[RMDB]
RNA sequence: GGGAACGACUCGAGUAGAGUCGAAAAGUUCAUCCCCUGCUCAAGGAUGCCCGAAACGGUGAGGCGGAAAGCAAAUUAAAUAACGUCAACCCAUCGGGACGGUUGGCCAGUUAAGAAGUGAGGAUUCAAAAGAUCGAACCGUUCGCGGUUCGAUCAAUCCCAUAAUUAUGUUCGCAUAAUUAUGGGAAAAAGAAACAACAACAACAAC
Reactivity to 2A3 in 0.01 (KOAc 150mM, MgCl2 10mM, bicine 150mM(pH8.5), 24C), signal-to-noise 2, nucleotides 027 to 156: g030u060u060c020a050u060c030c010c000c000u070g020c000u000c050a040a020g090g010a090u120g040c070c010c010g050a060a090a050c080g010g000u030g010a100g060g000c010g010g020a130a040a000g130c170a060a050a100u130u240a050a100a080u180a080a030c010g000u000c000a000a000c000c010c000a070u050c020g010g000g000a000c020g010g000u040u010g000g000c000c020a000g030u070u120a160a010g020a080a050g030u100g110a030g020g080a030u060u020c070a010a030a000a150g000a000u000c020g000a010a000c000c000g010u010u010c110g000c010g050g000u000u000c000g000a000u000c000a000a000
Reactivity to DMS in 0.01 (KOAc 150mM, MgCl2 10mM, bicine 150mM(pH8.5), 24C), signal-to-noise 2, nucleotides 027 to 156: g030u010u010c060a110u020c000c020c010c070u000g020c050u000c030a180a110g000g000a090u000g040c100c020c030g010a050a120a270c050g020g000u000g010a130g020g000c010g020g000a120a030a140g030c070a060a100a220u010u000a080a080a130u000a080a130c080g000u000c010a040a030c030c010c010a220u010c040g020g050g000a160c130g000g010u000u000g010g010c020c030a050g020u000u000a070a100g010a070a080g000u000g010a110g030g000a160u000u000c050a030a050a100a180g020a030u000c010g010a010a010c000c010g020u010u010c280g010c020g020g000u000u000c000g020a000u000c010a020a110
Structure probing data (2A3 and DMS) for a 207-nucleotide construct. For DMS the reverse transcriptase was MarathonRT. The data come from the RNA Mapping Database (RMDB), library M2RFPK.